[RMDB]
RNA sequence: GGGAACGACUCGAGUAGAGUCGAAAAAGCACGAGUACAAUUUACAAUUUCGUGCUGCUGGUGUUGUUUAAGAUGACGAUCUAAACGGUUUCCGUCAGCCUUCCACCUUCCAAUGCUACGAAGUUCAAAUCAGUACGUAUUUCGAUACGUACUGAUUAAAAGAAACAACAACAACAAC
Reactivity to 2A3 in 0.01 (KOAc 150mM, MgCl2 10mM, bicine 150mM(pH8.5), 24C), signal-to-noise 8, nucleotides 027 to 126: a000g000c000a000c010g020a020g050u170a070c100a170a130u130u160u150a120c110a080a080u050u100u070c000g000u000g000c000u010g000c040u020g000g030u030g020u100u060g040u030u110u050a050a050g020a060u050g030a030c080g030a040u020c020u070a060a080a060c060g040g010u030u090u030c040c000g020u020c020a010g000c000c010u030u010c010c010a030c010c000u020u000c010c020a080a090u110g040c030u040a070c070g090a090a030g040u060u090c050a050
Reactivity to DMS in 0.01 (KOAc 150mM, MgCl2 10mM, bicine 150mM(pH8.5), 24C), signal-to-noise 9, nucleotides 027 to 126: a030g010c000a010c000g010a030g020u000a090c240a120a100u010u010u010a130c250a100a100u010u010u000c010g010u000g000c000u000g020c100u010g010g000u000g010u010u010g010u000u000u000a050a050g000a110u000g010a090c090g010a100u000c030u010a040a060a090c160g010g010u000u010u000c060c030g010u000c040a060g010c070c050u000u000c040c020a060c060c020u000u000c030c030a060a080u010g010c080u000a080c120g010a060a080g010u000u000c090a070

Structure probing data (2A3 and DMS) for a 177-nucleotide construct.
It was measured as part of the RMDB library OK2TST.
2A3 adducts were read by reverse transcription with SuperScript II with manganese.
For DMS the reverse transcriptase was MarathonRT.